[RMDB]
RNA sequence: GGGAACGACUCGAGUAGAGUCGAAAAGAGCUUUUCGAAGCUCAAAUCAGCGUACUACAUGUGAGGUACCGGGAGCUGGCCGUCCCAAAUAGGACGGGUCCAGCUUUGAUCGGUACUACCCACCACAUGUAUCGCCAAAUCGCAGAUUCGUCUGCAAAACCUUUUGUAUUUUCGAAUACAAAAGGUUAAAAGAAACAACAACAACAAC
Reactivity to 2A3 in 0.01 (KOAc 150mM, MgCl2 10mM, bicine 150mM(pH8.5), 24C), signal-to-noise 4, nucleotides 027 to 156: g010a000g000c020u030u060u070u150c210g080a010a010g020c010u010c030a030a080a000u160c030a010g000c000g030u060a160c020u010a000c020a000u020g000u000g000a020g000g010u000a000c010c000g010g010g000a000g010c000u010g010g000c000c000g000u030c000c000c020a180a250a100u300a070g000g000a010c020g020g010g050u100c010c000a000g010c000u000u010u000g010a000u020c000g000g000u000a010c000u020a020c000c010c010a060c020c010a020c000a010u010g010u020a040u300c010g000c010c010a070a090a070u210c090g000c000a000g000a020u040u080c100g100u010c100u020g000c020a040a040
Reactivity to DMS in 0.01 (KOAc 150mM, MgCl2 10mM, bicine 150mM(pH8.5), 24C), signal-to-noise 3, nucleotides 027 to 156: g010a020g020c000u000u000u000u010c200g030a040a050g020c020u000c010a030a060a090u010c080a050g000c000g030u010a060c090u010a040c000a020u000g010u000g000a230g000g020u000a020c010c010g020g000g000a010g030c010u000g020g010c000c010g000u000c010c000c010a040a180a210u000a060g000g010a010c010g010g050g010u010c010c000a040g020c000u000u000u000g010a050u010c000g000g000u000a010c000u000a010c000c010c020a300c100c010a010c020a020u010g000u000a010u000c020g000c030c030a040a080a080u010c090g030c010a020g010a090u000u000c200g020u000c000u000g000c020a090a050
This 207-nucleotide RNA was probed chemically with 2A3 and DMS. The data come from the RNA Mapping Database (RMDB), library RNAMAK. Reactivities are rounded to 0.1 and cut off at 0 and 3. The DMS profile rests on 7,207 reads. For DMS the reverse transcriptase was MarathonRT. For 2A3, 4,027 sequencing reads were counted.